Background
Conditions: 150 mM KOAc, 10 mM MgCl2 and 150 mM bicine (pH 8.5), 24 C. Chemical mapping of a 207-nucleotide RNA with DMS and 2A3. Values cover nucleotides 27 to 156. For 2A3 the reverse transcriptase was SuperScript II with manganese. It was measured as part of the RMDB library OK3TST. For DMS the reverse transcriptase was MarathonRT.
RNA sequence: GGGAACGACUCGAGUAGAGUCGAAAACGGUUACUACCAUUGAAACCGAGGUCGCUACAUCUAGUGGGACAGUGGUGUCAGUUAACCCUGAUGGCUCGCUGCCACUGUCGUCACAAGUGAUCGACACCGUAGUUGAGACGCCUCACCGUGCAGAAUGAGCGAGAUAUAUAUUCGUAUAUAUCUCGCUAAAAGAAACAACAACAACAAC
Reactivity to DMS in 0.01 (KOAc 150mM, MgCl2 10mM, bicine 150mM(pH8.5), 24C), signal-to-noise 3, nucleotides 027 to 156: c030g020g000u000u000a130c040u000a090c060c080a140u000u020g010a190a090a050c000c000g010a110g000g020u000c050g030c020u000a100c030a060u010c030u000a160g050u000g020g030g020a040c040a040g040u010g020g030u000g020u000c070a070g030u000u010a060a060c080c100c020u000g010a160u000g010g020c000u010c120g040c040u000g020c010c020a050c020u000g000u000c010g020u000c010a030c020a080a140g040u000g010a080u000c010g040a040c010a050c010c010g000u000a080g010u000u000g000a300g000a080c020g020c030c010u000c040a070c030c040g020u000g000c010a100g010a080a130u000g000
Reactivity to 2A3 in 0.01 (KOAc 150mM, MgCl2 10mM, bicine 150mM(pH8.5), 24C), signal-to-noise 5, nucleotides 027 to 156: c010g000g010u060u060a040c050u050a040c010c060a110u070u180g080a070a030a020c050c040g030a070g020g000u050c010g020c070u090a050c030a120u090c040u080a070g020u010g000g030g000a000c010a000g000u000g000g040u050g090u070c000a000g010u040u120a050a050c030c030c020u090g090a100u180g060g000c050u050c110g020c020u040g000c000c000a000c000u000g000u000c030g100u040c000a000c010a030a030g010u000g060a050u030c010g020a020c020a060c040c020g060u050a040g030u010u110g050a040g020a060c070g040c030c020u030c010a020c010c020g040u090g040c040a050g000a180a110u070g010